[RMDB]
The record gives the reactivity of an RNA of 207 nucleotides to 2A3.

RNA sequence: GGGAACGACUCGAGUAGAGUCGAAAAAGUUAGGUUCGCUAUGGUGCAACUCUUUAAGGCAAUAACGAACUAACUCUAAGCAAGUAAUGGAGAAAUGCCAGGGUCACUAUCUAGCCAUAAUAGUGCUGUAAGUGACUUAGAUUCGUCUAAGUCACAACCAUCCUAUCGCGUUCGCGCGAUAGGAUGGAAAAGAAACAACAACAACAAC
Reactivity to 2A3 in 0.01 (KOAc 150mM, MgCl2 10mM, bicine 150mM(pH8.5), 24C), signal-to-noise 2, nucleotides 027 to 156: a000g030u030u030a060g080g060u020u060c020g000c030u030a000u040g120g100u080g030c080a090a170c050u090c050u160u210u290a100a060g050g000c020a010a030u050a060a060c010g010a000a000c030u010a000a030c000u010c030u050a050a000g020c080a060a000g060u160a100a020u130g060g000a020g070a070a100a020u040g050c050c040a040g000g020g010u020c000a040c040u030a040u120c000u000a010g070c030c000a040u070a150a000u060a030g070u080g010c070u040g030u120a200a120g010u000g000a000c000u000u000a000g010a000u000u040c150g000u000c170u000a020a000g000u000c000a000c010a000a000

It was measured as part of the RMDB library M2RFPK. The RNA was probed in 150 mM KOAc, 10 mM MgCl2 and 150 mM bicine (pH 8.5) at 24 C. Values cover nucleotides 27 to 156.